Chemical mapping of a 177-nucleotide RNA with 2A3 and DMS. Reactivities are given for positions 27 through 126. For DMS, 13,887 sequencing reads were counted. Values are in units of 0.01, from 0 to 300, in steps of 10. The RNA was probed in 150 mM KOAc, 10 mM MgCl2 and 150 mM bicine (pH 8.5) at 24 C. DMS adducts were read by reverse transcription with MarathonRT. Source: RMDB library OK2TST, as collected in RNAgym.
[RMDB]
RNA sequence: GGGAACGACUCGAGUAGAGUCGAAAAACAAAAAACCACCCAAAAAGGAGAAAGAUGUGAAGGCCUAGACCAUUCAUCCUCUGGGUCUGUUGGUGUCUGCUCCUGGCCCAGAGUGGUUGCAAAAGGACAUUUAAUUAGUGUUCGCACUAAUUAAAUGAAAAGAAACAACAACAACAAC
Reactivity to 2A3 in 0.01 (KOAc 150mM, MgCl2 10mM, bicine 150mM(pH8.5), 24C), signal-to-noise 4, nucleotides 027 to 126: a010c030a020a100a030a010a000a040c030c010a020c030c010c030a050a050a020a030a020g040g000a030g010a070a300a010g020a040u040g050u070g140a090a020g030g000c000c030u010a010g020a040c020c030a090u200u200c030a080u130c010c020u000c010u000g010g030g000u000c020u070g160u100u070g120g070u060g020u030c030u040g020c030u010c000c010u010g010g000c020c000c000a020g010a010g010u040g010g000u000u040g030c030a000a050a070a050g090g030a020
Reactivity to DMS in 0.01 (KOAc 150mM, MgCl2 10mM, bicine 150mM(pH8.5), 24C), signal-to-noise 8, nucleotides 027 to 126: a090c130a020a060a060a060a030a040c040c010a040c010c010c030a030a040a160a130a020g000g000a040g010a050a070a030g010a030u000g010u010g010a110a040g000g010c010c010u000a020g010a030c120c050a120u010u010c200a080u010c110c070u000c010u000g010g000g010u000c010u000g010u000u000g020g020u000g010u000c030u000g000c020u000c040c010u010g010g010c030c040c030a110g010a020g010u000g010g010u000u000g010c210a050a050a070a070g000g010a240